An RNA of 207 nucleotides, treated with 2A3 and read out base by base.
Reactivities are rounded to 0.1 and cut off at 0 and 3.
The RNA was probed in 150 mM KOAc, 10 mM MgCl2 and 150 mM bicine (pH 8.5) at 24 C.
It was measured as part of the RMDB library OK3TST.
RNA sequence: GGGAACGACUCGAGUAGAGUCGAAAAAAGAGCUGGUCAGCUUCAGGUGGCUCAUGACCGUUUUCCACGAGUGGAACGUGUUGGUGCGCAUUACGCACAACUGCAUCCCCAACCUACAGAUGUCUUUGUUUCAACUGCCGGUCCUGGUCAACAUCUCGCUGGAUACGUUUUUCGAAACGUAUCCAGCAAAAGAAACAACAACAACAAC
Reactivity to 2A3 in 0.01 (KOAc 150mM, MgCl2 10mM, bicine 150mM(pH8.5), 24C), signal-to-noise 1, nucleotides 027 to 156: a000a000g080a020g040c070u070g020g060u040c020a000g000c000u100u070c030a060g000g070u030g000g000c000u010c010a030u110g080a080c030c000g010u120u050u040u050c030c050a070c150g040a070g070u060g020g040a040a050c040g090u050g140u210u060g090g010u010g000c020g010c030a060u100u210a110c090g000c020a010c030a040a060c000u030g000c030a090u070c050c010c000c030a000a000c070c020u120a120c120a070g020a040u060g090u000c070u020u090u060g050u050u020u020c030a120a130c050u040g030c000c030g060g030u060c000c010u020g030g000u010c030a010a100c010a100u090c080u010c070